[RMDB]
RNA sequence: GGGAACGACUCGAGUAGAGUCGAAAAGAAAGAAAGAAAGCGGUUGGGUGGGUCCAUCGACCGUCGUGGUGUAUUCGGACGCUUUACCACGACGCGAGGAAAUAGCGAGACCGACCACCCCCUUUAACAGAGGUAUAGUAGUUCGCUACUAUACCAACACAUGGAUAUUGUUCGCAAUAUCCAUGUGAAAAGAAACAACAACAACAAC
Reactivity to DMS in 0.01 (KOAc 150mM, MgCl2 10mM, bicine 150mM(pH8.5), 24C), signal-to-noise 2, nucleotides 027 to 156: g030a140a090a140g000a170a110a140g000a090a080a090g020c110g010g020u000u010g010g010g020u010g030g000g020u000c010c000a100u000c110g000a040c250c020g000u000c000g040u010g000g020u000g030u010a090u010u000c040g000g010a140c040g050c080u010u000u010a060c020c000a020c010g010a020c010g030c010g010a090g040g010a030a080a070u010a050g010c020g010a160g030a150c030c020g010a060c020c010a030c000c000c000c010c010u000u010u000a070a160c110a120g010a150g020g010u000a010u000a000g020u000a030g020u000u010c290g030c000u000a010c000u000a000u010a000c000c010a070a050
Reactivity to 2A3 in 0.01 (KOAc 150mM, MgCl2 10mM, bicine 150mM(pH8.5), 24C), signal-to-noise 4, nucleotides 027 to 156: g060a010a060a010g070a050a070a020g050a060a070a030g130c180g080g090u230u130g080g010g010u030g010g000g040u000c020c010a090u160c010g030a040c030c010g000u000c000g000u000g000g000u040g010u060a100u060u150c070g010g060a040c030g030c050u080u080u120a010c000c000a010c010g000a010c010g000c010g010a020g000g050a080a090a040u080a040g020c040g030a040g020a080c010c010g010a020c000c000a010c000c000c000c000c000u000u090u070a140a080c120a070g060a040g090g000u000a010u000a000g000u000a000g000u020u060c180g010c120u000a000c000u000a000u000a000c000c000a010a000